Structure probing data (DMS and 2A3) for a 177-nucleotide construct.
In probing experiments dimethyl sulfate is read out at A N1 and C N3, which are open when not base-paired.
The data come from the RNA Mapping Database (RMDB), library OK2TST.
RNA sequence: GGGAACGACUCGAGUAGAGUCGAAAAAGUAGGAUAUAGCCUUACAUUGAUAUAUGCAGGAGAUAAAUUGCAUUCAGAACAGAUAUGCGUUAUUAAUCUCAGAAUUUUCCAGUGGCUAAUGGGACUGGUCUGCACAUCCAUUCGUGGAUGUGCAGACAAAAGAAACAACAACAACAAC
Reactivity to DMS in 0.01 (KOAc 150mM, MgCl2 10mM, bicine 150mM(pH8.5), 24C), signal-to-noise 1, nucleotides 027 to 126: a080g000u020a040g020g010a160u020a050u000a030g010c030c050u000u010a200c030a140u000u000g000a090u000a050u000a050u020g000c130a140g000g000a090g010a090u000a050a050a020u000u030g010c000a040u000u000c000a020g000a120a130c260a050g000a010u020a040u000g000c030g020u000u000a090u000u000a090a020u000c020u000c010a170g000a070a090u000u000u010u000c020c000a080g020u010g010g030c030u030a070a060u000g000g010g010a100c140u000g000
Reactivity to 2A3 in 0.01 (KOAc 150mM, MgCl2 10mM, bicine 150mM(pH8.5), 24C), signal-to-noise 1, nucleotides 027 to 126: a000g050u040a030g020g040a080u040a030u030a280g040c010c000u030u090a020c000a140u080u080g080a000u060a040u060a040u140g130c020a070g000g270a070g000a000u070a040a070a060u170u140g000c000a000u000u010c020a000g170a300a110c010a070g010a060u130a020u140g030c010g000u000u000a060u140u000a090a060u000c010u000c010a050g080a120a150u040u020u060u000c010c000a030g000u070g010g020c010u000a090a140u070g040g000g000a010c010u040g020